The record gives the reactivity of an RNA of 177 nucleotides to DMS and 2A3.
Reactivities are given for positions 27 through 126.
It was measured as part of the RMDB library OK2TRN.
[RMDB]
RNA sequence: GGGAACGACUCGAGUAGAGUCGAAAAGACACGACGGAGACGUCGUGUCAAAGAGUGGGAAACCACUCAAAGAGCCACAGCUUCGGCUGUGGCUCAAGGCGCGGCGAGGUCCGCGGAACAAACGCAACCGAUACGUAUAGUUCGCUAUACGUAUCGGAAAAGAAACAACAACAACAAC
Reactivity to DMS in 0.01 (KOAc 150mM, MgCl2 10mM, bicine 150mM(pH8.5), 24C), signal-to-noise 2, nucleotides 027 to 126: g000a000c020a000c000g010a000c000g020g010a300g000a250c000g020u010c010g020u000g020u010c000a050a030a110g000a040g030u000g000g000g000a120a120a170c000c010a000c010u000c000a020a060a160g000a010g000c000c020a000c000a000g020c010u010u020c220g040g000c010u000g080u000g000g080c000u010c000a000a070g000g000c000g020c020g030g000c030g000a150g000g000u030c000c030g060c010g000g000a060a040c180a050a090a040c140g000c160a120a120
Reactivity to 2A3 in 0.01 (KOAc 150mM, MgCl2 10mM, bicine 150mM(pH8.5), 24C), signal-to-noise 1, nucleotides 027 to 126: g010a010c000a000c000g010a010c000g020g030a040g040a040c010g000u000c000g010u000g000u010c000a000a000a000g000a010g000u020g000g000g000a030a040a110c010c000a010c000u010c010a020a030a000g000a010g000c010c020a010c000a000g000c000u110u120c290g090g000c000u000g010u000g010g010c000u020c000a010a010g000g030c000g010c010g000g000c050g140a180g120g100u050c020c010g000c000g000g040a030a010c080a050a040a010c070g040c090a040a060